[RMDB]
The record gives the reactivity of an RNA of 177 nucleotides to DMS and 2A3. Conditions: 150 mM KOAc, 10 mM MgCl2 and 150 mM bicine (pH 8.5), 24 C. As a SHAPE reagent, 2A3 marks flexible, mostly unpaired nucleotides at the ribose 2'-OH. The DMS profile rests on 1,058 reads.

RNA sequence: GGGAACGACUCGAGUAGAGUCGAAAAAAUAGCGGGUCAAGGUACAACGCAGAGAGAUAGGCUCAUCCCAAGUUCUCUUCGGAGUACCAAGACUUCGGUUCAGAAGAGAUACCGACUCUUCAUAGAAGCGUUAAAGGGAAUUCGUUCCCUUUAACGCAAAAGAAACAACAACAACAAC
Reactivity to DMS in 0.01 (KOAc 150mM, MgCl2 10mM, bicine 150mM(pH8.5), 24C), signal-to-noise 2, nucleotides 027 to 126: a130a020u000a110g020c020g010g030g010u010c000a060a300g010g000u010a000c010a020a230c010g000c100a050g010a020g000a020g000a080u000a180g000g010c060u000c300a100u000c290c010c020a070a120g000u010u010c010u010c000u000u000c010g000g000a300g010u000a010c030c010a030a300g000a010c020u000u000c010g000g010u000u000c120a100g000a010a020g020a020g000a070u000a220c010c060g010a120c010u000c000u000u000c000a080u000a130g000a080a140
Reactivity to 2A3 in 0.01 (KOAc 150mM, MgCl2 10mM, bicine 150mM(pH8.5), 24C), signal-to-noise 1, nucleotides 027 to 126: a000a030u270a040g120c070g010g010g000u000c010a030a010g000g010u030a000c000a040a000c020g000c030a000g000a000g000a010g000a060u090a130g040g000c020u050c070a100u060c010c000c010a000a050g060u070u010c000u030c000u040u020c000g010g010a000g010u000a010c000c010a010a000g000a010c000u040u040c040g010g020u120u100c060a060g000a010a000g010a000g010a040u040a160c030c000g080a090c010u030c000u010u000c020a000u070a080g170a160a000